[RMDB]
RNA sequence: GGGAACGACUCGAGUAGAGUCGAAAAAAGGAAAGAUCUUGAAUCCUAGCUUCAAUUGCCAAGUCACGUUGUUCUACCUUCGCUGGCGCUUGAUGGAGAAUGCGUGAAAAGCGUCGUCUCUCUGCCAUGAAAAGGACGUAUUCGUACGUCCUUUUCAAAAAGAAACAACAACAACAAC
Reactivity to DMS in 0.01 (KOAc 150mM, MgCl2 10mM, bicine 150mM(pH8.5), 24C), signal-to-noise 4, nucleotides 027 to 126: a050a030g000g010a050a070a080g000a060u020c040u000u000g010a070a090u010c010c020u000a060g000c070u000u000c070a060a080u020u000g010c020c040a080a090g010u000c030a020c040g020u000u010g020u000u000c030u000a090c050c010u000u000c030g040c010u010g000g000c080g030c080u010u030g010a050u000g010g010a090g000a040a020u010g000c040g000u010g000a040a050a070a130g020c020g010u000c070g010u010c050u000c010u000c030u000g000c030c050a150
Reactivity to 2A3 in 0.01 (KOAc 150mM, MgCl2 10mM, bicine 150mM(pH8.5), 24C), signal-to-noise 4, nucleotides 027 to 126: a000a000g110g030a070a060a040g090a070u050c020u090u100g030a040a030u050c020c010u020a020g030c010u070u050c020a030a130u070u030g030c010c020a070a040g050u020c010a000c060g130u170u160g030u170u020c020u060a190c000c000u020u070c020g000c030u070g050g040c030g010c080u070u190g000a030u110g060g010a000g010a020a070u060g020c010g010u040g050a050a050a020a010g040c010g040u050c020g060u000c020u000c000u020c000u050g020c020c020a040
Conditions: 150 mM KOAc, 10 mM MgCl2 and 150 mM bicine (pH 8.5), 24 C. This 177-nucleotide RNA was probed chemically with DMS and 2A3. 2A3 adducts were read by reverse transcription with SuperScript II with manganese.